[RMDB]
RNA sequence: GGGAACGACUCGAGUAGAGUCGAAAAAUUGAUGAGGGCGUCCUCCUCGACAUCGCGACGAAGGCUUCGGCUACUGCCAACCCCGUAGACGGGCACAUUUCGAGGAUGUGCUUGAUAGAUAACUCCGCGCACGCAUAAAUUUCGAUUUAUGCGUGCGAAAAGAAACAACAACAACAAC
Reactivity to DMS in 0.01 (KOAc 150mM, MgCl2 10mM, bicine 150mM(pH8.5), 24C), signal-to-noise 1, nucleotides 027 to 126: a170u070u000g000a100u020g000a160g010g020g030c040g020u000c010c040u010c020c000u040c000g000a150c070a060u000c050g100c000g000a000c080g020a110a130g050g000c090u020u040c070g020g010c040u000a070c080u060g000c110c050a030a180c110c000c000c010g020u020a100g000a170c120g000g000g000c050a000c020a000u020u000u010c140g000a120g000g000a000u010g000u020g000c040u010u000g010a140u030a000g000a140u020a070a040c090u020c030c020g000
Reactivity to 2A3 in 0.01 (KOAc 150mM, MgCl2 10mM, bicine 150mM(pH8.5), 24C), signal-to-noise 3, nucleotides 027 to 126: a000u180u190g060a100u090g050a100g000g030g000c030g030u030c030c010u070c030c000u030c020g000a030c020a080u100c000g020c040g080a060c100g060a080a040g080g000c040u030u030c010g000g030c010u060a050c030u090g050c010c020a070a110c040c010c000c000g020u050a030g050a110c050g000g000g010c000a000c010a010u060u130u130c100g050a070g130g030a020u000g010u000g010c000u020u060g050a050u050a110g040a000u110a110a050c020u050c030c020g010